About this RNA:
Chemical mapping of a 177-nucleotide RNA with 2A3 and DMS.
[RMDB]
RNA sequence: GGGAACGACUCGAGUAGAGUCGAAAACGAGUAUCGGAUCUAGACUCAGGAUAAGCGAUGUCCCCAGCAGAAUAAGCAUCUAUUGGACAAUAGUAAAACCGGGAGACAUACUUUUGAUUAACAGCACAAUCCCAGGACGAUUCGUCGUCCUGGGAUUAAAAGAAACAACAACAACAAC
Reactivity to 2A3 in 0.01 (KOAc 150mM, MgCl2 10mM, bicine 150mM(pH8.5), 24C), signal-to-noise 2, nucleotides 027 to 126: c000g010a000g040u060a040u000c010g010g080a000u020c050u110a080g050a150c000u000c040a040g060g060a090u160a180a000g010c120g000a010u010g000u010c000c000c000c000a000g000c060a000g080a280a050u220a200a000g020c010a000u000c020u110a020u000u030g130g000a100c080a130a040u010a050g130u140a000a040a070a000c050c020g020g000g020a210g000a040c030a000u170a090c000u100u080u030u000g040a080u000u150a080a000c070a030g000c020a040c040
Reactivity to DMS in 0.01 (KOAc 150mM, MgCl2 10mM, bicine 150mM(pH8.5), 24C), signal-to-noise 2, nucleotides 027 to 126: c040g000a100g020u050a030u030c100g000g060a060u000c130u060a060g000a090c050u070c130a150g000g000a140u000a040a130g010c120g000a040u000g000u000c020c000c000c000a150g040c030a170g070a120a020u000a110a210g000c190a150u060c030u000a030u000u000g010g000a060c120a070a010u010a030g000u010a120a050a230a080c160c080g000g000g000a140g010a010c010a160u000a000c010u000u000u000u000g000a070u060u030a130a020c070a080g010c130a070c300
The RNA was probed in 150 mM KOAc, 10 mM MgCl2 and 150 mM bicine (pH 8.5) at 24 C. For 2A3, 605 sequencing reads were counted. 2A3 adducts were read by reverse transcription with SuperScript II with manganese.